[RMDB]
RNA sequence: GGGAACGACUCGAGUAGAGUCGAAAAGGGGUCGAAUAAUGGCUUCCCAGGCUCUUGGAUUUAUGGAGCUGAAGCCUCCACGGCUCCAUUGUCAGAGCCUGUGAGAAGCCAGAAUUCGACGGAGGCACCCAAAGAUCCAGGCUUCGGCCUGGAUCAAGAGAUCAACUAUGUUCGCAUAGUUGAUCUCAAAAGAAACAACAACAACAAC
Reactivity to 2A3 in 0.01 (KOAc 150mM, MgCl2 10mM, bicine 150mM(pH8.5), 24C), signal-to-noise 2, nucleotides 027 to 156: g130g000g010g000u010c000g000a000a000u080a020a040u030g000g020c010u000u020c000c000c000a040g010g000c000u000c070u200u300g180g000a130u300u300u170a000u140g000g010a000g000c000u000g020a060a040g010c010c010u020c010c020a010c020g010g000c010u020c000c020a000u000u010g010u000c030a010g000a000g010c000c000u010g000u060g030a300g000a000a000g010c010c000a000g000a000a020u000u000c000g000a000c020g000g000a010g010g000c020a030c000c000c000a070a030a030g000a000u000c000c010a000g000g000c000u060u210c300g130g000c000c000u000g000g000a000u010c000a000a010
Background
Chemical mapping of a 207-nucleotide RNA with 2A3. Source: RMDB library RNAMAK, as collected in RNAgym. The RNA was probed in 150 mM KOAc, 10 mM MgCl2 and 150 mM bicine (pH 8.5) at 24 C.